[RMDB]
Source information: The record gives the reactivity of an RNA of 177 nucleotides to 2A3 and DMS. Reactivities are given for positions 27 through 126.
RNA sequence: GGGAACGACUCGAGUAGAGUCGAAAACUGCAUACAGUGCGAGACUAGCUUUCCGAUCUGACUUGGCGUGAUCCGUGACAUGCGUAGUGUGACACCUGCUCCUAGGUCAAUGGGGGUAGGGGGCGGAGAUUUACUCCUCCUUCGGGAGGAGUAAAUCAAAAGAAACAACAACAACAAC
Reactivity to 2A3 in 0.01 (KOAc 150mM, MgCl2 10mM, bicine 150mM(pH8.5), 24C), signal-to-noise 1, nucleotides 027 to 126: c020u060g010c070a020u100a140c020a070g050u020g060c040g070a050g020a100c030u060a040g000c020u020u050u070c040c010g080a080u000c040u070g060a090c050u050u110g040g040c010g070u040g000a080u050c030c000g040u020g020a000c000a070u100g040c010g050u100a030g010u050g060u020g050a010c000a010c070c000u020g030c000u000c000c000u020a010g000g140u120c070a090a130u090g000g030g020g030g020u030a030g040g020g000g000g000c030g030g040a110
Reactivity to DMS in 0.01 (KOAc 150mM, MgCl2 10mM, bicine 150mM(pH8.5), 24C), signal-to-noise 3, nucleotides 027 to 126: c040u020g020c090a090u020a090c120a050g030u010g000c090g000a110g010a090c090u010a100g010c060u010u000u000c050c020g010a080u010c040u000g020a090c100u010u010g020g010c060g010u000g010a060u000c010c050g010u000g000a070c040a020u000g020c080g010u000a080g030u000g010u010g020a120c080a100c020c010u000g010c010u010c000c010u010a040g000g010u010c230a100a080u010g010g000g000g020g000u000a030g020g000g000g020g000c030g000g000a130

For DMS, 2,478 sequencing reads were counted.
The reactions ran in a buffer of 150 mM KOAc, 10 mM MgCl2 and 150 mM bicine (pH 8.5), at 24 C.
DMS adducts were read by reverse transcription with MarathonRT.